The data come from the RNA Mapping Database (RMDB), library M2PK50. The record gives the reactivity of an RNA of 177 nucleotides to 2A3 and DMS. The reactions ran in a buffer of 150 mM KOAc, 10 mM MgCl2 and 150 mM bicine (pH 8.5), at 24 C.
RNA sequence: GGGAACGACUCGAGUAGAGUCGAAAACGUCCUAGUUUCGACUAGGACGAAAUAAAAUCAGCGGUAAAUAAUGGAGGCGUAUUACCGCUGAACGCCUCGAUAAAAUGCGAUGAUUCGUCAUCGCAAAGAUGAUGUAUAGCUUCGGCUAUACAUCAUCAAAAGAAACAACAACAACAAC
Reactivity to 2A3 in 0.01 (KOAc 150mM, MgCl2 10mM, bicine 150mM(pH8.5), 24C), signal-to-noise 7, nucleotides 027 to 126: c010g010u000c000c000u000a020g010u000u050u070c200g070a010c000u000a000g000g010a000c000g000a000a010a000u090a000a040a010a060u030c000a000g000c000g130g190u150a080a060a070u140a080a100u170g150g020a020g020g010c010g000u010a030u040u090a080c000c010g000c000u000g000a000a000c010g010c000c000u010c010g000a020u140a150a170a030a030u070g010c010g000a000u000g000a000u020u060c170g050u010c060a010u000c010g000c010a010a010a010
Reactivity to DMS in 0.01 (KOAc 150mM, MgCl2 10mM, bicine 150mM(pH8.5), 24C), signal-to-noise 3, nucleotides 027 to 126: c010g010u000c000c000u010a000g000u000u010u020c170g000a020c000u000a000g000g000a000c000g000a010a050a060u010a050a050a090a060u010c000a000g030c000g010g020u000a020a040a040u000a060a070u010g020g000a020g010g010c030g000u000a060u000u010a210c010c000g000c000u000g000a020a020c040g010c000c000u000c040g020a110u010a070a060a090a120u000g000c000g010a010u000g000a040u000u000c170g010u000c000a000u000c000g000c010a010a020a060
High DMS reactivity at an A or C suggests that its Watson-Crick edge is free.